Description: This 177-nucleotide RNA was probed chemically with 2A3 and DMS. It was measured as part of the RMDB libraries RFM100 and RFMREP. For 2A3 the reverse transcriptase was SuperScript II with manganese. DMS adducts were read by reverse transcription with MarathonRT. The RNA was probed in 150 mM KOAc, 10 mM MgCl2 and 150 mM bicine (pH 8.5) at 24 C.

RNA sequence: GGGAACGACUCGAGUAGAGUCGAAAACCCAAGACCACUUUUGAUUUAGUCUUUGUUGACGUGGCACCCACAAUGGUCGAAACGUGAUACCUCGCUUAAGGGAUGUGGGUGCCACGUCAGCGAAGAUAAUGGUAAUAGUGUUCGCACUAUUACCAUUAAAAGAAACAACAACAACAAC
Reactivity to 2A3 in 0.01 (KOAc 150mM, MgCl2 10mM, bicine 150mM(pH8.5), 24C), signal-to-noise 9, nucleotides 027 to 126: c000c000c000a020a020g100a060c040c030a100c090u070u130u120u140g170a170u080u100u220a040g020u000c000u000u000u000g010u000u010g000a000c000g000u000g000g000c000a000c000c010c000a010c000a060a140u090g070g050u050c030g070a100a120a050c070g030u060g050a060u140a210c010c030u070c060g070c110u170u150a080a060g040g000g030a040u060g000u000g010g000g000u000g000c000c000a000c000g000u000c000a000g000c000g000a000a000g000a000u010
Reactivity to DMS in 0.01 (KOAc 150mM, MgCl2 10mM, bicine 150mM(pH8.5), 24C), signal-to-noise 7, nucleotides 027 to 126: c000c010c010a140a130g000a090c140c150a110c120u000u010u010u010g010a110u010u010u000a130g010u000c010u000u000u000g010u000u000g000a010c000g030u000g000g000c000a000c010c000c000a010c010a060a100u010g030g020u010c050g010a090a100a120c180g000u010g000a130u020a150c120c070u000c070g000c160u000u010a100a120g000g000g000a130u000g010u000g000g000g010u000g000c000c000a000c000g000u000c000a000g000c000g010a010a010g000a020u000